[RMDB]
RNA sequence: GGGAACGACUCGAGUAGAGUCGAAAAGGUUGUUUCGACAACCGACAUCACCUUUGUGGUCGGGGCUAUGAAGCCCAGUAACAAGUAGGCCCAUUGGGCCUACCGCCCUGGGUGGAGCGCUCGACCACUCUGGUCAAUAGUUUCCUUCGGGAAACAAGAUAUAUUACAGGUUCGCCUGUAAUAUAUCAAAAGAAACAACAACAACAAC
Reactivity to 2A3 in 0.01 (KOAc 150mM, MgCl2 10mM, bicine 150mM(pH8.5), 24C), signal-to-noise 6, nucleotides 027 to 156: g050g000u030u010g010u020u110u140c150g070a040c030a070a040c020c010g020a040c020a130u200c050a020c010c000u020u010u010g000u000g000g000u000c000g010g020g020g000c010u050a130u300g050a030a010g010c010c000c000a000g040u110a090a100c090a090a040g000u000a000g000g040c040c010c040a240u170u300g000g000g000c000c000u000a000c000c000g010c000c030c000u000g000g000g010u030g010g050a010g000c180g080c020u000c000g000a000c000c000a000c000u000c000u000g000g010u010c010a050a230u070a250g000u000u000u000c010c000u020u080c240g060g000g000a000a020a010c010a000a010
Reactivity to DMS in 0.01 (KOAc 150mM, MgCl2 10mM, bicine 150mM(pH8.5), 24C), signal-to-noise 3, nucleotides 027 to 156: g010g030u000u000g010u000u000u000c150g010a080c000a000a020c000c000g020a060c050a110u010c080a050c010c000u000u000u000g040u000g010g030u000c010g050g010g010g030c000u000a200u000g010a240a300g000c000c000c000a020g010u000a080a070c080a140a060g040u010a040g030g000c000c010c010a300u000u020g120g020g000c000c010u000a000c010c020g000c210c130c000u010g000g010g040u000g010g000a090g000c090g020c040u010c010g000a030c010c000a010c000u000c010u000g020g010u000c090a060a110u010a060g000u010u010u000c000c000u000u000c300g040g010g000a030a020a010c010a050a130
An RNA of 207 nucleotides, treated with 2A3 and DMS and read out base by base. The 2A3 profile rests on 8,305 reads. DMS (dimethyl sulfate) methylates the pairing face of unpaired adenines and cytosines. Conditions: 150 mM KOAc, 10 mM MgCl2 and 150 mM bicine (pH 8.5), 24 C.